[RMDB]
RNA sequence: GGGAACGACUCGAGUAGAGUCGAAAACUAAGGACAUUAUAAAUCAGUACACGAAAACUAUUAAUGCAGAGGAACUAUUGGAUAAUGACCAGACAAAACUGAAAGUGUUAGGCAGCUGGAUUCUCCAGGAAUACAAGAACAGAACAUGCCCUCAGUGGAAUUUGGAUAACUUCGGUUAUCCAAAUUCAAAAGAAACAACAACAACAAC
Reactivity to 2A3 in 0.01 (KOAc 150mM, MgCl2 10mM, bicine 150mM(pH8.5), 24C), signal-to-noise 3, nucleotides 027 to 156: c050u070a100a000g040g010a010c040a100u110u060a070u200a210a180a040u150c080a040g060u100a050c070a010c070g120a030a080a090a060c080u100a090u260u160a100a080u100g010c040a020g020a070g110g030a050a030c040u060a100u170u110g040g000a020u020a110a050u120g070a050c010c010a000g050a070c030a010a150a070a000c040u030g030a080a060a010g050u030g010u080u070a010g060g020c010a000g040c030u030g000g040a070u110u020c030u030c070c010a020g040g010a040a010u070a130c040a100a000g070a110a000c030a000g070a060a020c020a010u060g030c000c000c000u040c000a040g020u060g080
Reactivity to DMS in 0.01 (KOAc 150mM, MgCl2 10mM, bicine 150mM(pH8.5), 24C), signal-to-noise 1, nucleotides 027 to 156: c020u000a090a110g010g010a140c060a000u000u020a120u000a050a090a120u000c030a110g010u010a070c070a080c040g010a060a070a090a070c060u000a120u000u000a090a090u000g060c000a060g010a160g020g030a050a110c070u010a100u000u030g040g010a100u010a020a090u010g030a090c000c030a110g000a140c040a050a020a030a110c020u020g000a000a090a130g010u000g000u000u000a060g070g040c020a150g020c000u010g020g000a280u010u000c070u010c020c080a040g010g040a130a130u000a020c040a020a100g000a030a020c060a060g000a060a100c070a020u000g000c000c010c040u000c040a060g060u000g000